RNA sequence: GGGAACGACUCGAGUAGAGUCGAAAACGCUUCGUCAACGAUGCGCACAGCGAAGAAUGCGGAACGAUGGUCUACUUGAUCGACGACGUCGCUGGCGAAUACCUUUCCUCUUGUGCGCUAGAUCUACGUGCGAUGCCUCUGGCGGUCUUCCGGACGGGUAUCACAACAGGUUCGCCUGUUGUGAUACAAAAGAAACAACAACAACAAC
Reactivity to DMS in 0.01 (KOAc 150mM, MgCl2 10mM, bicine 150mM(pH8.5), 24C), signal-to-noise 2, nucleotides 027 to 156: c050g030c040u000u020c050g030u000c010a090a060c070g000a060u040g010c040g000c060a020c020a100g010c080g000a060a030g030a110a040u000g030c000g040g080a040a090c030g000a070u020g010g040u000c010u000a210c120u010u000g010a130u000c120g000a080c020g040a070c000g020u000c020g000c000u020g000g000c000g020a100a060u000a050c070c020u000u000u040c000c000u000c070u010u000g010u000g020c080g060c020u000a110g020a110u000c030u000a050c040g030u000g020c080g020a030u000g010c010c010u000c050u000g010g000c000g010g000u000c030u000u000c030c000g010g020a180c050g000g000
Reactivity to 2A3 in 0.01 (KOAc 150mM, MgCl2 10mM, bicine 150mM(pH8.5), 24C), signal-to-noise 6, nucleotides 027 to 156: c050g000c010u090u060c040g060u050c020a060a070c040g060a040u140g000c000g000c000a010c000a020g110c150g030a050a020g040a090a080u140g040c050g040g050a090a080c030g070a100u080g090g030u000c030u100a210c080u210u290g060a060u120c050g050a030c040g030a030c030g030u030c010g010c060u050g040g000c020g080a050a030u190a230c020c000u030u020u080c020c020u060c040u060u070g010u000g010c010g000c000u020a040g010a090u030c060u110a020c030g020u040g040c010g030a030u070g010c010c000u050c030u040g000g020c020g040g000u020c000u100u030c030c000g030g040a060c080g060g010